[RMDB]
RNA sequence: GGGAACGACUCGAGUAGAGUCGAAAAGAUAUGGAGGGAGUCCGCGAAACGGUGAUCGUUCGGAAACGAACGCGUACCGGAGGAUCUCCUAAGUCAAAAGGAGGUCUUACUUCGGUAAGACCUCCAACUAGCGAACUUUGUUCGCAAAGUUCGCUAGAAAAGAAACAACAACAACAAC
Reactivity to 2A3 in 0.01 (KOAc 150mM, MgCl2 10mM, bicine 150mM(pH8.5), 24C), signal-to-noise 1, nucleotides 027 to 126: g040a030u110a060u120g050g010a070g050g100g010a100g180u000c010c000g010c050g110a140a060a010c050g000g010u040g030a050u060c010g020u020u000c010g020g020a060a040a020c000g030a000a000c010g030c050g020u040a000c000c030g020g000a130g020g020a050u130c010u010c000c020u010a080a010g020u020c030a010a010a020a100g060g000a010g000g000u000c000u000u000a010c020u030u060c210g030g050u000a020a000g000a020c000c000u010c000c000a000a000
Reactivity to DMS in 0.01 (KOAc 150mM, MgCl2 10mM, bicine 150mM(pH8.5), 24C), signal-to-noise 3, nucleotides 027 to 126: g010a070u000a300u020g020g030a070g010g020g030a280g000u000c020c020g000c060g000a060a060a120c020g000g000u000g010a100u010c010g000u000u000c020g010g000a100a090a170c000g010a020a010c000g010c160g020u000a020c010c000g020g000a130g020g000a060u000c020u000c000c000u000a030a070g000u000c040a070a070a140a120g020g010a010g010g010u000c000u000u010a020c000u000u030c160g020g010u000a000a010g000a010c000c020u000c000c000a000a020